[RMDB]
RNA sequence: GGGAACGACUCGAGUAGAGUCGAAAAAACUACACGCUUAGAAACAUCAACUAACAUUUCCACAAACUACCUUCAACUAUGAUCCAGGACAGCAGUAGUAAUACGCUAACUGAUCUGGAUCAUACCUGCAGGACAGGACAACUUAUAACAUAGUAUAAUUUAACGACCAUUUCGAUGGUCGUUAAAUAAAAGAAACAACAACAACAAC
Reactivity to 2A3 in 0.01 (KOAc 150mM, MgCl2 10mM, bicine 150mM(pH8.5), 24C), signal-to-noise 3, nucleotides 027 to 156: a000a000c090u150a050c060a000c040g140c040u090u020a070g110a040a070a020c020a030u000c000a010a040c000u020a000a010c020a050u050u040u010c000c020a020c030a030a030a010c020u100a260c000c000u040u090c030a070a040c020u000a000u010g000a000u000c000c000a010g000g040a020c020a040g020c060a040g000u040a000g020u020a090a090u130a160c090g000c020u050a050a090c000u030g010a100u000c000u000g000g000a000u000c000a000u010a000c000c000u020g000c040a090g040g110a150c020a010g020g020a000c020a030a010c050u090u080a070u030a110a040c020a050u100a050g070u070a120u080a200
Reactivity to DMS in 0.01 (KOAc 150mM, MgCl2 10mM, bicine 150mM(pH8.5), 24C), signal-to-noise 1, nucleotides 027 to 156: a100a060c040u010a100c040a050c050g000c000u000u000a070g050a050a090a050c040a100u000c000a050a070c010u010a020a060c070a060u000u010u000c000c010a120c150a070a040a080c010u000a100c000c030u000u010c020a040a160c040u000a040u000g000a050u010c000c000a030g000g000a070c030a030g010c030a040g050u000a050g010u010a190a100u000a060c070g020c010u000a090a070c010u000g000a100u010c010u010g000g000a000u000c000a000u020a000c070c050u000g080c080a090g020g000a300c050a040g000g000a090c000a070a010c000u000u000a050u000a010a100c020a070u010a030g020u000a150u000a050